The data come from the RNA Mapping Database (RMDB), library OK3TST. An RNA of 207 nucleotides, treated with 2A3 and DMS and read out base by base. For 2A3, 2,617 sequencing reads were counted. The reactions ran in a buffer of 150 mM KOAc, 10 mM MgCl2 and 150 mM bicine (pH 8.5), at 24 C. Values cover nucleotides 27 to 156.
[RMDB]
RNA sequence: GGGAACGACUCGAGUAGAGUCGAAAAAACGCGAUCAAUCGGGACGGCGCAUUACGGAUCGGACGAGUAAAACAAAGACGGUUUAGCUCAAAAACUUUGCUUUUGUACUCCUCGCCCAAUAUUCCAACGCAUAGCGGAUUACUAGCGGGCUUGCCGACGUGAUAGCAUUGUUCGCAAUGCUAUCACGAAAAGAAACAACAACAACAAC
Reactivity to 2A3 in 0.01 (KOAc 150mM, MgCl2 10mM, bicine 150mM(pH8.5), 24C), signal-to-noise 4, nucleotides 027 to 156: a000a000c120g040c060g010a080u080c060a060a080u070c030g020g010g040a020c030g030g000c010g000c020a030u080u110a070c070g020g010a030u060c060g010g010a030c020g010a020g000u090a030a090a020a030c050a000a030a010g030a030c030g010g020u030u060u080a070g030c030u040c120a150a120a040a030a030c040u130u110u210g010c000u110u040u070u090g010u020a020c040u000c010c010u000c020g000c010c010c000a000a040u090a090u130u050c000c000a040a030c040g020c070a060u060a070g080c030g050g010a020u080u080a090c060u040a030g010c020g020g030g020c000u050u100g030c000c010g050a040
Reactivity to DMS in 0.01 (KOAc 150mM, MgCl2 10mM, bicine 150mM(pH8.5), 24C), signal-to-noise 2, nucleotides 027 to 156: a080a100c060g000c050g030a140u000c050a070a060u000c080g010g000g020a130c090g000g000c030g000c020a230u010u000a090c070g030g000a050u000c060g030g010a040c020g010a030g000u000a030a040a180a020c000a040a010a010g010a040c070g000g020u000u000u010a030g010c040u020c030a140a080a150a050a110c010u000u000u020g080c000u000u020u010u000g030u000a080c040u010c140c010u000c000g000c000c010c000a050a070u000a090u010u000c040c010a110a080c000g010c050a030u010a100g020c040g020g010a160u000u000a070c080u000a120g020c040g030g020g010c050u000u010g010c000c000g010a170